[RMDB]
RNA sequence: GGGAACGACUCGAGUAGAGUCGAAAAGAUAUGGAUCCACUAAGCAAGGAAUGGUAUCGGAAACGAUACCCUUCUGAUGACCUUAACCGGAUCCUAAGUCAAACAUACAAUGUUCGCAUUGUAUGAACAAUGCUUACAGCUUCGGCUGUAAGCAUUGAAAAGAAACAACAACAACAAC
Reactivity to DMS in 0.01 (KOAc 150mM, MgCl2 10mM, bicine 150mM(pH8.5), 24C), signal-to-noise 5, nucleotides 027 to 126: g010a030u000a030u010g000g000a010u000c000c000a140c180u000a010a020g000c020a070a020g030g010a010a000u000g020g020u000a000u000c000g010g010a020a020a040c010g020a010u000a000c000c000c050u000u000c000u000g000a080u010g000a010c300c000u000u010a010a110c220c270g000g000a000u000c000c000u000a000a090g000u000c000a150a160a290c000a010u000a000c000a000a000u000g010u000u010c300g000c000a010u000u000g010u010a000u000g020a100a170
Reactivity to 2A3 in 0.01 (KOAc 150mM, MgCl2 10mM, bicine 150mM(pH8.5), 24C), signal-to-noise 1, nucleotides 027 to 126: g000a000u020a000u060g000g000a000u020c010c000a020c150u040a020a000g000c050a060a190g030g000a010a000u020g030g000u000a000u010c000g000g000a020a000a000c000g000a000u010a010c000c000c000u000u010c000u000g050a070u050g010a020c010c000u050u040a080a130c180c220g010g020a000u010c000c010u000a010a000g010u000c010a140a080a070c010a000u010a000c000a010a020u030g070u060u130c300g010c170a010u010u000g020u000a020u020g000a030a010